[RMDB]
RNA sequence: GGGAACGACUCGAGUAGAGUCGAAAAAAUGCUUGUGCGGGUGAAACCAACACGAGUCCUGUCGCUAUGCCCAUCGUUAUCGCUAACCGCAUAGUUACCUCUUUUCAUUUUGUAACCAUCUGUCACAUGAUUACUGAUGUCCAUUGUAACCUGCCUGUCGCUAAUUCCUGUUCGCAGGAAUUAGCGAAAAAGAAACAACAACAACAAC
Reactivity to 2A3 in 0.01 (KOAc 150mM, MgCl2 10mM, bicine 150mM(pH8.5), 24C), signal-to-noise 1, nucleotides 027 to 156: a000a060u110g030c000u000u000g000u020g020c080g000g010g000u040g020a080a020a020c020c020a050a110c030a000c000g010a000g000u030c010c080u060g000u000c000g020c000u020a000u050g020c000c000c000a060u080c100g060u110u110a110u230c050g000c110u050a000a060c030c030g110c060a010u040a090g000u030u010a030c030c060u020c050u080u140u110u170c100a140u000u150u140u300g050u030a020a110c070c000a040u000c010u060g040u040c080a040c000a100u080g020a060u100u100a000c060u020g010a010u000g080u060c080c080a070u130u160g020u060a040a060c010c010u010g000c000c000u030g030